[RMDB]
Source: RMDB library OK1LIB, as collected in RNAgym. This 177-nucleotide RNA was probed chemically with DMS and 2A3.

RNA sequence: GGGAACGACUCGAGUAGAGUCGAAAAGAGGAGCUAAGGAGGCUAUCAUGAUUGAUUUGCAACCCCAUAAUCCUCUGGAGGUGUGUAACUCAGGAGUCAUAUCUGGCUAUCCAGAGAGAGCGGGUGACGCUAUCCCAAGAUUCGUCUUGGGAUAGCGAAAAGAAACAACAACAACAAC
Reactivity to DMS in 0.01 (KOAc 150mM, MgCl2 10mM, bicine 150mM(pH8.5), 24C), signal-to-noise 4, nucleotides 027 to 126: g000a030g010g000a060g000c090u020a190a160g020g010a090g060g020c030u000a030u010c030a030u030g010a100u030u010g000a040u010u010u010g010c020a070a090c020c070c020c040a120u010a110a130u010c010c000u000c010u000g000g010a150g010g010u010g000u010g000u040a130a070c040u020c030a080g000g000a090g000u020c120a050u020a180u020c090u020g000g010c140u000a130u020c010c010a000g000a060g010a080g010a110g000c090g020g010g010u000g000a130
Reactivity to 2A3 in 0.01 (KOAc 150mM, MgCl2 10mM, bicine 150mM(pH8.5), 24C), signal-to-noise 5, nucleotides 027 to 126: g060a010g050g010a000g040c040u030a010a090g030g030a020g050g050c030u050a030u080c050a040u110g130a150u130u140g030a040u100u070u150g020c060a080a180c030c000c000c010a030u080a100a100u070c000c000u000c000u000g010g030a060g030g040u050g020u040g010u160a060a050c040u040c070a030g040g070a010g070u070c030a020u080a120u220c090u050g030g000c040u120a130u120c010c020a000g010a010g000a010g010a010g050c080g020g000g020u040g030a040

The RNA was probed in 150 mM KOAc, 10 mM MgCl2 and 150 mM bicine (pH 8.5) at 24 C. For DMS the reverse transcriptase was MarathonRT.